This 177-nucleotide RNA was probed chemically with DMS and 2A3. It was measured as part of the RMDB library RFMREP. For 2A3 the reverse transcriptase was SuperScript II with manganese. The 2A3 profile rests on 1,893 reads.
RNA sequence: GGGAACGACUCGAGUAGAGUCGAAAAGAAAUGGGAGUUCCUUGCAGCCCAAAGCUUCAAGGAUGAAAUUCUUCCUGCGGUUUUGGACUGAAGGGAGCUCCUACUUAAAGAAGUCGUUCGCGACUUCCUUUCUACAAGGGUUCGCCCUUGUAGAAAGAAAAGAAACAACAACAACAAC
Reactivity to DMS in 0.01 (KOAc 150mM, MgCl2 10mM, bicine 150mM(pH8.5), 24C), signal-to-noise 2, nucleotides 027 to 126: g000a050a130a090u000g000g010g010a000g020u000u000c000c000u000u000g010c020a000g040c010c000c050a030a030a030g000c010u010u000c080a300a020g000g000a010u000g000a130a160a250u010u010c050u000u000c010c000u010g000c300g000g000u000u000u000u000g000g010a030c010u000g000a030a000g000g010g000a010g010c000u000c000c000u000a000c050u000u010a060a100a120g010a030a000g010u000c000g020u000u010c250g010c010g010a020c000u000u010c000
Reactivity to 2A3 in 0.01 (KOAc 150mM, MgCl2 10mM, bicine 150mM(pH8.5), 24C), signal-to-noise 2, nucleotides 027 to 126: g010a010a100a040u060g000g010g000a000g000u000u010c000c000u000u030g010c000a010g010c010c000c000a010a010a000g010c020u050u040c180a120a050g020g030a010u020g020a090a240a160u250u050c010u010u010c010c000u000g000c010g020g000u020u010u010u000g040g000a030c010u010g000a010a000g010g000g000a000g000c000u000c000c000u000a000c000u010u040a070a040a040g000a000a000g010u000c010g020u050u160c180g020c010g110a000c000u010u000c000